[RMDB]
RNA sequence: GGGAACGACUCGAGUAGAGUCGAAAAUUGCCUUGCAUUCAGGAUUUAGGCAAAGACGGCAACGAACAGCAGUUCUAUAACUAUCAGUGCUUGGGCGAUGAGCGCGAACAAUCCGAACCUACUUACAAGUCGGCGGUGACGCUUAACUACACGUUUGACCCCAGUCUAAUUUCGAUUAGACUGGGGUAAAAGAAACAACAACAACAAC
Reactivity to DMS in 0.01 (KOAc 150mM, MgCl2 10mM, bicine 150mM(pH8.5), 24C), signal-to-noise 1, nucleotides 027 to 156: u010u010g000c000c110u000u020g030c030a110u000u000c040a110g060g030a190u020u010u000a090g000g000c020a050a080a090g010a160c040g000g000c040a100a220c110g010a120a070c060a140g000c070a110g000u000u000c030u000a050u010a050a050c020u000a140u000c040a080g000u000g010c070u000u000g010g020g000c000g000a080u000g000a100g000c000g030c050g000a070a030c060a060a100u010c020c000g000a050a100c000c020u000a020c030u010u000a090c080a050a040g030u000c110g010g000c030g030g020u030g000a060c030g040c060u010u000a030a070c060u000a020c070a010c060g000u000u000u000g000
Reactivity to 2A3 in 0.01 (KOAc 150mM, MgCl2 10mM, bicine 150mM(pH8.5), 24C), signal-to-noise 2, nucleotides 027 to 156: u050u020g010c000c000u010u040g020c010a080u030u150c020a020g000g100a060u060u080u150a080g000g000c000a020a000a000g020a040c050g000g020c030a040a000c030g060a040a050c020a050g130c000a000g010u020u080c030u050a120u050a170a200c070u040a030u140c030a060g020u000g070c000u000u060g010g010g000c000g030a050u090g030a030g000c010g000c010g020a010a020c060a090a030u160c010c010g060a120a110c010c000u020a030c030u110u050a050c030a160a040g010u000c030g010g020c000g000g070u030g020a020c020g020c000u020u010a010a000c010u090a040c120a010c080g110u040u020u100g100